RNA sequence: GGGAACGACUCGAGUAGAGUCGAAAACAUCUUUCCUCCCUACACAGUGACUCCAGCUUGGGAGGGGCAGGGAUAGGCUGAGCCAGCACUCCCUGUGGUGUCUGCCUGCCACGUGCAGCUCUGGAGUAAAACCUGGAGAAGUUCGCUUCUCCAGGAACUUUAUAGGUCAGUUCGCUGACCUAUAAAGAAAAGAAACAACAACAACAAC
Reactivity to DMS in 0.01 (KOAc 150mM, MgCl2 10mM, bicine 150mM(pH8.5), 24C), signal-to-noise 2, nucleotides 027 to 156: c040a090u000c070u000u010u010c050c000u010c000c020c010u000a120c090a140c130a130g010u000g020a110c020u010c000c000a110g030c060u000u000g000g010g010a020g000g020g000g010c030a040g020g000g000a090u000a070g010g000c020u010g020a210g000c080c030a130g000c010a070c080u000c010c040c000u000g000u010g030g020u000g030u000c030u010g000c030c030u000g040c060c020a090c100g000u020g000c030a080g020c070u000c020u010g020g020a080g020u010a090a050a080a160c010c000u000g000g010a030g000a040a040g030u000u000c300g020c030u000u000c000u000c000c000a000g010g000a000a000
Reactivity to 2A3 in 0.01 (KOAc 150mM, MgCl2 10mM, bicine 150mM(pH8.5), 24C), signal-to-noise 5, nucleotides 027 to 156: c010a050u060c060u110u140u060c010c010u040c010c000c000u120a080c160a010c030a170g110u010g080a020c000u000c010c000a030g030c030u060u040g000g010g000a010g000g000g000g000c000a000g010g010g030a130u290a150g060g000c010u050g040a070g200c100c070a010g000c030a010c040u010c010c000c010u000g010u010g010g010u040g040u020c030u040g030c020c020u040g050c030c020a160c160g060u190g010c000a020g000c020u030c020u060g000g000a000g000u010a010a030a000a020c000c000u000g000g000a000g000a000a010g010u050u180c140g030c140u000u000c000u000c000c000a000g000g000a000a000